[RMDB]
RNA sequence: GGGAACGACUCGAGUAGAGUCGAAAACGGCUUGAGCACGCACCAAGUGGCGGUGCAGCUCAACUAUUGCGAGCGCACGAUCAAGAACAUCGUUCAUGACAUAGUGACGCGGCUGAAGCUCCGCAACCGCUAAGCCCAUAUUCGUAUGGGCUUAGCGAAAAGAAACAACAACAACAAC
Reactivity to 2A3 in 0.01 (KOAc 150mM, MgCl2 10mM, bicine 150mM(pH8.5), 24C), signal-to-noise 5, nucleotides 027 to 126: c030g020g020c020u010u060g020a010g020c040a040c240g000c010a000c010c000a110a070g120u120g250g080c130g000g000u000g000c010a010g010c000u010c000a010a030c030u100a070u080u230g070c050g020a010g010c010g000c020a030c040g050a120u070c080a090a080g020a040a020c030a130u140c130g040u020u060c030a110u090g030a050c030a080u170a070g000u020g100a040c010g020c000g010g000c010u110g040a080a020g020c030u070c040c020g030c010a050a060c050
Reactivity to DMS in 0.01 (KOAc 150mM, MgCl2 10mM, bicine 150mM(pH8.5), 24C), signal-to-noise 2, nucleotides 027 to 126: c030g020g000c160u040u010g000a000g000c000a110c220g060c000a010c000c000a110a120g020u030g010g020c250g040g000u000g020c030a100g000c030u000c040a020a070c130u000a100u060u000g000c060g080a100g040c010g000c060a000c070g000a010u000c070a000a040g000a000a030c050a100u010c140g000u000u000c030a050u000g040a040c200a080u020a250g000u000g000a050c030g040c130g000g070c070u000g020a150a090g000c070u020c000c000g080c080a140a120c200

The record gives the reactivity of an RNA of 177 nucleotides to 2A3 and DMS. It was measured as part of the RMDB library OK1LIB.